[RMDB]
RNA sequence: GGGAACGACUCGAGUAGAGUCGAAAAGCUUAAUAACCUGCGCUGAGCCCUUCUCCCCCAGCUUGCCUGUGUCCUAGGGAAUUGGAAGGUCAUCCUUCACAGGAUCGUGUGGAAGUCCUGCUCAGGGUCCAAACAUGGUAAUUCGUUACCAUGUUAAUUAUUAUUGAGACUUCGGUCUCAAUAAUAAAAAAGAAACAACAACAACAAC
Reactivity to 2A3 in 0.01 (KOAc 150mM, MgCl2 10mM, bicine 150mM(pH8.5), 24C), signal-to-noise 1, nucleotides 027 to 156: g000c000u120u100a080a060u150a140a300c030c020u030g000c080g030c030u020g030a000g030c030c000c010u140u060c100u080c020c000c010c000c010a010g000c020u040u170g020c010c010u050g020u010g000u070c010c030u040a020g060g010g010a040a080u040u020g080g010a000a070g030g050u110c010a040u060c020c000u050u010c010a010c000a060g020g010a040u040c040g030u010g010u030g090g000a100a030g050u040c040c020u000g000c000u000c010a020g030g020g010u050c010c040a000a100a000c010a000u000g000g000u010a040a050u090u010c100g020u040u000a000c000c000a000u000g000u000u000a000a000
Reactivity to DMS in 0.01 (KOAc 150mM, MgCl2 10mM, bicine 150mM(pH8.5), 24C), signal-to-noise 2, nucleotides 027 to 156: g010c020u000u000a090a130u000a090a090c000c010u000g020c050g000c020u000g020a140g000c010c030c040u000u000c060u010c040c000c010c010c030a090g030c050u000u000g010c040c050u000g020u000g020u000c050c040u000a090g010g030g030a070a120u010u000g020g010a080a070g010g000u010c070a080u000c020c010u010u020c060a080c080a030g030g010a020u000c050g010u000g050u010g020g000a070a090g000u010c010c020u000g000c020u000c040a080g030g030g000u000c080c050a130a050a010c000a000u010g010g010u000a000a070u000u000c300g020u000u000a000c000c000a010u000g010u000u000a000a120